[RMDB]
Chemical mapping of a 207-nucleotide RNA with 2A3. The reactions ran in a buffer of 150 mM KOAc, 10 mM MgCl2 and 150 mM bicine (pH 8.5), at 24 C. For 2A3 the reverse transcriptase was SuperScript II with manganese.
RNA sequence: GGGAACGACUCGAGUAGAGUCGAAAAGCUUUUUUUUCGGAUUAGGCGUGGAGGCGAAAGUCACCCUCCUAGCAUCGCAAGUUCGUGCUUGCGACUUACACGUAGGGCGAGGGGUGGGCGAAAGUUGAAAACACGAUGUUGUUCGCAACAUCGUGAAGUCAUCUUACCUGUUCGCAGGUAAGAUGACAAAAGAAACAACAACAACAAC
Reactivity to 2A3 in 0.01 (KOAc 150mM, MgCl2 10mM, bicine 150mM(pH8.5), 24C), signal-to-noise 1, nucleotides 027 to 156: g060c030u050u110u050u060u030u060u030u190c140g000g030a130u180u060a150g000g000c000g020u010g080g000a000g010g000c070g060a230a080a000g140u090c010a030c020c000c000u000c000c010u020a000g000c000a060u000c000g000c010a020a010g030u120u150c140g220u300g070c000u000u000g000c000g000a000c000u040u080a020c110a010c010g060u000a010g000g020g000c120g070a140g000g030g010g000u200g010g000g030c040g150a240a060a000g000u040u040g030a010a000a000a040c000a000c010g000a000u000g000u010u020g020u070u070c180g000c100a000a000c000a000u000c000g000u000g010a000a020